Conditions: 150 mM KOAc, 10 mM MgCl2 and 150 mM bicine (pH 8.5), 24 C.
An RNA of 207 nucleotides, treated with DMS and 2A3 and read out base by base.
The 2A3 profile rests on 3,259 reads.

RNA sequence: GGGAACGACUCGAGUAGAGUCGAAAAGUUGCCUUCGGGCAACACAGACGGGGUCAAGCUGGAGAACGCCUUUUGACGAGCUGAAGCCUCCACGGCUCGAUAAGGAUGUUCGAUGAAAGCUUGACGGAGGCACCCCUACGACUAGUUUCGACUAGAACACACAAAGUGUUUUCGAACACUUUGUGUGAAAAGAAACAACAACAACAAC
Reactivity to DMS in 0.01 (KOAc 150mM, MgCl2 10mM, bicine 150mM(pH8.5), 24C), signal-to-noise 1, nucleotides 027 to 156: g040u000u000g000c010c030u000u000c300g050g010g060c010a000a010c010a070c070a060g010a200c130g030g000g000g000u000c000a010a020g000c000u000g000g000a100g030a010a030c010g020c010c000u000u000u000u000g020a220c060g030a040g000c010u000g010a030a150g010c030c000u010c010c030a230c030g030g000c000u010c010g040a130u010a040a030g040g000a180u000g000u010u000c000g010a060u000g000a270a140a110g020c050u000u000g020a010c030g000g010a060g110g010c010a120c050c010c000c000u010a130c110g010a130c030u000a080g010u000u000u010c100g010a090c020u000a070g000a150a300
Reactivity to 2A3 in 0.01 (KOAc 150mM, MgCl2 10mM, bicine 150mM(pH8.5), 24C), signal-to-noise 3, nucleotides 027 to 156: g000u010u000g000c010c010u040u100c270g050g000g000c010a000a000c030a000c040a020g230a050c060g080g050g030g000u000c000a000a000g010c000u010g030g010a010g000a020a000c020g100c010c000u050u050u050u150g180a110c070g010a000g000c000u020g020a090a010g010c000c010u030c010c000a000c000g000g000c000u010c010g050a080u040a100a020g030g070a170u200g030u000u000c040g030a130u030g000a010a000a000g000c000u000u000g000a000c000g000g000a000g000g000c000a030c010c020c010c010u070a080c070g170a090c060u030a020g010u040u100u150c120g040a030c010u040a020g100a200a030